[RMDB]
RNA sequence: GGGAACGACUCGAGUAGAGUCGAAAAGAUAUGGAGAGAACUGCGAUAAGAUCAGUAUCGGAAACGAUAUAGAUCUUUUGACGCAGACUCCUAAGUCAAAACCUACGGUGGUUCGCCACCGUAGGAAGCAACCAAUUAGGUUCGCCUAAUUGGUUGCAAAAGAAACAACAACAACAAC
Reactivity to 2A3 in 0.01 (KOAc 150mM, MgCl2 10mM, bicine 150mM(pH8.5), 24C), signal-to-noise 1, nucleotides 027 to 126: g030a000u090a040u160g000g000a000g000a010g060a180a160c000u000g010c010g020a050u010a100a020g000a000u020c030a010g000u010a000u000c000g000g000a070a020a050c000g000a000u010a000u030a080g030a000u000c000u040u030u020u040g080a020c030g000c000a010g020a300c000u000c000c000u020a160a000g060u040c050a020a030a140a180c000c000u000a000c000g000g030u030g000g020u030u090c260g070c090c000a000c000c010g000u000a010g010g000a000a020
Reactivity to DMS in 0.01 (KOAc 150mM, MgCl2 10mM, bicine 150mM(pH8.5), 24C), signal-to-noise 1, nucleotides 027 to 126: g000a020u000a300u020g000g000a000g000a080g020a170a130c000u000g030c000g000a220u010a020a000g020a000u000c000a300g020u010a000u020c000g000g000a060a080a180c000g000a000u000a020u050a160g000a010u000c000u000u000u010u000g050a170c030g000c000a010g000a130c010u000c000c000u000a080a050g010u000c050a130a020a110a130c000c000u000a000c040g000g020u000g020g000u000u000c090g030c000c000a000c000c000g000u010a010g000g010a000a050

This 177-nucleotide RNA was probed chemically with 2A3 and DMS. Source: RMDB library TTRDEL, as collected in RNAgym. Values cover nucleotides 27 to 126. Conditions: 150 mM KOAc, 10 mM MgCl2 and 150 mM bicine (pH 8.5), 24 C.